[RMDB]
RNA sequence: GGGAACGACUCGAGUAGAGUCGAAAAUCGCUCGGUUCGCCGAGCGAAAAAAGCGUACUACGAGAACAUGUGACCCGUCAAUGACGUUUCCCAAAUAGGAAAUAAGACAGACGCACAUUCCCUCGUAUCGCAAAAAAUGGUCGAUUCGUCGACCAAACUUUAACAGUAUAUUCGUAUACUGUUAAAGAAAAGAAACAACAACAACAAC
Reactivity to DMS in 0.01 (KOAc 150mM, MgCl2 10mM, bicine 150mM(pH8.5), 24C), signal-to-noise 3, nucleotides 027 to 156: u000c000g030c000u000c010g030g010u000u000c270g040c020c020g010a010g010c020g000a000a010a040a090a050a100g000c020g030u000a090c090u000a030c010g000a030g000a060a070c100a030u000g000u000g000a090c060c040c050g030u000c020a220a160u010g030a070c200g020u000u000u000c000c000c000a020a130a250u000a090g000g010a040a010a020u000a070a150g010a120c020a070g000a070c020g000c000a010c010a020u000u000c080c030c010u010c040g010u000a030u000c020g000c020a000a050a090a100a080a100u000g020g020u010c000g010a080u000u000c290g040u000c010g010a030c000c000a000a000a060
Reactivity to 2A3 in 0.01 (KOAc 150mM, MgCl2 10mM, bicine 150mM(pH8.5), 24C), signal-to-noise 5, nucleotides 027 to 156: u030c000g000c000u000c000g010g020u060u040c160g040c110c000g000a000g020c010g000a000a000a000a000a000a010g020c030g040u100a060c040u010a010c040g010a010g020a070a020c050a090u020g010u040g110a150c050c060c020g000u010c020a110a270u100g040a040c070g010u000u010u030c040c030c020a200a260a050u260a070g010g020a010a000a010u060a080a050g070a030c040a030g030a020c010g000c030a010c000a010u050u070c020c010c000u000c010g000u020a040u170c040g000c000a000a010a010a000a050a100u080g000g000u000c000g010a020u060u060c180g050u020c000g050a010c000c010a020a010a010
The record gives the reactivity of an RNA of 207 nucleotides to DMS and 2A3. For 2A3, 7,569 sequencing reads were counted. Values cover nucleotides 27 to 156.